Description: Chemical mapping of a 177-nucleotide RNA with 2A3 and DMS. It was measured as part of the RMDB libraries RFM100 and RFMREP. For 2A3 the reverse transcriptase was SuperScript II with manganese.
RNA sequence: GGGAACGACUCGAGUAGAGUCGAAAAGGAUUAGUCUGCCCAUUUUCUAUAUACGUAAGCGCUAUUUCUGAAGAAUAGCUUAUUUGAUCAUGGCAAAGGCACGGCUAAUCCUUCCAAAACAUUUGGGUGCAUAGCUGAAUUUCGAUUCAGCUAUGCAAAAAGAAACAACAACAACAAC
Reactivity to 2A3 in 0.01 (KOAc 150mM, MgCl2 10mM, bicine 150mM(pH8.5), 24C), signal-to-noise 2, nucleotides 027 to 126: g000g000a000u000u000a010g010u000c010u010g000c000c000c040a060u000u050u000u000c010u000a060u020a000u030a150c060g040u010a030a100g070c020g070c110u030a020u020u160u030c130u150g260a170a120g050a080a040u000a000g020c000u050u010a070u020u170u150g040a050u040c010a000u020g090g000c060a040a100a110g040g000c000a000c090g000g000c000u000a000a000u000c010c000u000u000c000c000a000a010a020a020c070a050u120u000u090g100g000g040
Reactivity to DMS in 0.01 (KOAc 150mM, MgCl2 10mM, bicine 150mM(pH8.5), 24C), signal-to-noise 3, nucleotides 027 to 126: g000g000a020u000u000a000g010u000c000u020g000c000c000c150a190u040u010u010u000c000u000a050u010a080u010a130c200g000u000a010a030g020c130g030c170u000a000u000u010u000c090u050g000a150a290g000a020a010u000a060g000c000u010u000a010u000u010u000g000a080u000c160a000u000g000g010c230a030a050a080g000g000c000a030c180g010g000c000u000a000a000u000c000c030u000u000c000c010a080a080a110a120c220a100u020u020u010g030g010g020